[RMDB]
RNA sequence: GGGAACGACUCGAGUAGAGUCGAAAACGAGGAUAUGCCGACGUCUCAGUCACGCUUGAAGGCAGAGACGGAAGUGACUAGCGUCCGAGGAGACGGAAUUCCAAAGAAAGCAAAGCCUUCAACGCGGCCUGCUGGUCCAUUUCGAUGGACCAGCAGGAAAAGAAACAACAACAACAAC
Reactivity to 2A3 in 0.01 (KOAc 150mM, MgCl2 10mM, bicine 150mM(pH8.5), 24C), signal-to-noise 2, nucleotides 027 to 126: c050g030a090g060g050a140u090a010u290g100c000c020g000a070c060g050u010c000u000c050a050g030u000c030a050c070g000c010u000u000g010a010a000g050g000c040a100g020a000g030a070c000g000g010a060a000g100u210g080a070c060u080a040g000c000g000u000c000c000g110a270g050g130a240g010a000c040g060g110a040a070u050u000c070c000a000a120a000g300a050a090a010g070c090a200a000a000g000c000c000u000u000c020a000a000c100g000c000g070g010
The data come from the RNA Mapping Database (RMDB), library OK1LIB. Structure probing data (2A3) for a 177-nucleotide construct. The reactions ran in a buffer of 150 mM KOAc, 10 mM MgCl2 and 150 mM bicine (pH 8.5), at 24 C. For 2A3 the reverse transcriptase was SuperScript II with manganese. The 2A3 profile rests on 637 reads.